[RMDB]
RNA sequence: GGGAACGACUCGAGUAGAGUCGAAAAUAUGACGGGCUUCAAUGUCAAGUUCACUGUUGCGCUGCACAUAGUAAGCCACAUCAGCAAUGGCAACAUACAAAACAAAACCUUUGUCGGUGCGCUUGACCGUGGAGCAUAGGUUCGCCUAUGCUCCACGAAAAGAAACAACAACAACAAC
Reactivity to 2A3 in 0.01 (KOAc 150mM, MgCl2 10mM, bicine 150mM(pH8.5), 24C), signal-to-noise 2, nucleotides 027 to 126: u260a160u100g070a000c070g040g010g000c010u090u030c070a090a080u090g020u020c020a020a000g020u000u040c010a000c040u090g050u160u110g030c090g000c000u040g050c020a040c050a110u130a050g100u100a050a030g010c030c030a070c030a070u170c080a030g000c000a030a170u090g070g020c020a030a030c010a040u150a010c030a010a040a040a010c050a030a100a030a030c060c000u040u060u050g040u040c020g010g010u000g000c000g000c010u040u020g000a020c020
Reactivity to DMS in 0.01 (KOAc 150mM, MgCl2 10mM, bicine 150mM(pH8.5), 24C), signal-to-noise 2, nucleotides 027 to 126: u000a080u000g000a110c140g000g050g010c040u010u010c140a080a080u010g010u010c010a000a050g000u000u000c020a000c030u020g020u000u000g000c070g000c080u000g000c160a060c210a080u000a060g000u000a070a090g030c040c030a070c060a060u000c110a090g000c040a110a080u000g010g000c010a060a050c110a060u010a100c130a030a050a030a050c120a080a090a150a100c220c100u000u000u000g020u000c300g010g010u000g040c120g000c000u000u020g000a000c050
An RNA of 177 nucleotides, treated with 2A3 and DMS and read out base by base. It was measured as part of the RMDB library OK2TST. The reactions ran in a buffer of 150 mM KOAc, 10 mM MgCl2 and 150 mM bicine (pH 8.5), at 24 C. Values cover nucleotides 27 to 126.